[RMDB]
RNA sequence: GGGAACGACUCGAGUAGAGUCGAAAAGGGGAACACCCUGUCCAACGAGUCGGUAGGACCGAUAAACUGGUCGCGGUCCGUCAGGCGCAGCCCUGGUGGACCGCCCGUAUCAGCCAGCAGCCGCUGCCUAAGUCUAAGUGUUCGCACUUAGACUUAGAAAAGAAACAACAACAACAAC
Reactivity to DMS in 0.01 (KOAc 150mM, MgCl2 10mM, bicine 150mM(pH8.5), 24C), signal-to-noise 6, nucleotides 027 to 126: g010g000g010g000a190a100c230a160c000c000c010u000g000u010c010c010a130a290c060g000a050g010u000c010g000g000u010a100g010g010a190c020c020g010a080u010a040a080a090c150u010g010g010u000c050g000c010g000g010u000c010c000g000u000c010a000g010g010c030g010c170a080g000c120c000c010u000g010g020u000g010g000a010c010c000g010c000c020c020g010u000a070u010c100a100g000c060c040a070g000c060a080g010c120c100g010c030u010g010c090
Reactivity to 2A3 in 0.01 (KOAc 150mM, MgCl2 10mM, bicine 150mM(pH8.5), 24C), signal-to-noise 4, nucleotides 027 to 126: g020g010g000g020a150a040c030a150c100c000c010u010g060u010c010c010a010a040c040g020a030g050u030c010g010g050u070a050g050g110a040c010c010g000a020u100a080a200a030c090u120g010g010u060c040g000c010g040g000u000c020c000g010u010c000a000g000g000c090g040c200a050g010c010c000c010u010g000g000u000g000g010a000c000c000g000c000c000c000g020u050a080u120c010a020g060c050c010a000g000c010a010g080c050c100g010c020u030g000c010

About this RNA: This 177-nucleotide RNA was probed chemically with DMS and 2A3. The DMS profile rests on 6,369 reads. The RNA was probed in 150 mM KOAc, 10 mM MgCl2 and 150 mM bicine (pH 8.5) at 24 C. The data come from the RNA Mapping Database (RMDB), library RFMREP. 2A3 adducts were read by reverse transcription with SuperScript II with manganese.